This 177-nucleotide RNA was probed chemically with 2A3 and DMS. The reactions ran in a buffer of 150 mM KOAc, 10 mM MgCl2 and 150 mM bicine (pH 8.5), at 24 C. For 2A3, 4,227 sequencing reads were counted.
RNA sequence: GGGAACGACUCGAGUAGAGUCGAAAAGAAAUAAAGUCGUAAGACGUAAAGGUCGUAAGUAUAUCGUAAAUAAGACCGUAGCGGGUAAAAGAUAUACGUAACCGCGUAAACAGGUAACUGGUAAGAAGGGAUUAUGUUAGUUCGCUAACAUAAUCCCAAAAGAAACAACAACAACAAC
Reactivity to 2A3 in 0.01 (KOAc 150mM, MgCl2 10mM, bicine 150mM(pH8.5), 24C), signal-to-noise 3, nucleotides 027 to 126: g070a000a190a020u200a030a070a000g040u030c060g080u080a070a020g070a040c080g000u080a130a000a000g140g000u030c020g070u010a030a030g020u020a000u000a010u010c060g020u030a000a300a000u130a140a040g010a010c000c010g040u020a010g010c050g010g040g000u060a040a220a000a000g020a000u030a010u000a040c000g000u040a010a070c000c000g000c020g000u050a120a070a040c010a000g080g040u040a060a100c060u020g090g100u120a110a080g030a060a170
Reactivity to DMS in 0.01 (KOAc 150mM, MgCl2 10mM, bicine 150mM(pH8.5), 24C), signal-to-noise 5, nucleotides 027 to 126: g020a070a110a080u040a060a100a130g030u000c030g000u070a090a090g000a020c030g000u050a090a110a070g000g010u000c060g030u020a130a090g000u000a010u000a000u000c020g000u010a050a130a100u030a090a100g000a020c000c000g000u010a120g010c130g000g000g000u010a020a050a110a080g000a020u000a020u010a020c020g000u000a090a070c010c010g000c050g000u010a030a100a050c090a020g000g000u040a070a130c030u000g010g000u030a070a100g010a090a140